[RMDB]
RNA sequence: GGGAACGACUCGAGUAGAGUCGAAAAUCGGACGGCGGCCAUGAGUCGCAACGCAAAGCCGCGGCAAGUGGAGUUAGCGAGAAGAGACUAGGCUUUCGUUUCUUCAAGUGAAGCGGUCACCAAUCAGAAUAGCUUGCGCAGUUCGCUGCGCAAGCAACACUUAGGUAGCCUUCGGGCUACCUAAGUGAAAAGAAACAACAACAACAAC
Reactivity to 2A3 in 0.01 (KOAc 150mM, MgCl2 10mM, bicine 150mM(pH8.5), 24C), signal-to-noise 1, nucleotides 027 to 156: u100c010g020g070a020c050g080g030c000g040g080c000c010a120u120g010a030g040u030c000g000c010a100a000c100g000c030a160a170a000g120c050c070g000c000g000g030c030a070a020g000u010g030g010a040g020u050u100a010g070c030g010a030g020a090a010g020a000g030a050c050u120a060g140g150c000u030u130u070c000g020u020u000u010c020u000u050c030a000a030g010u010g050a040a000g010c060g000g060u030c010a070c140c010a060a070u160c030a000g160a300a160u190a100g000c000u000u020g000c010g000c010a010g000u020u090c170g120c180u030g000c010g020c000a000a000g010c000a000a000
The record gives the reactivity of an RNA of 207 nucleotides to 2A3. The reactions ran in a buffer of 150 mM KOAc, 10 mM MgCl2 and 150 mM bicine (pH 8.5), at 24 C.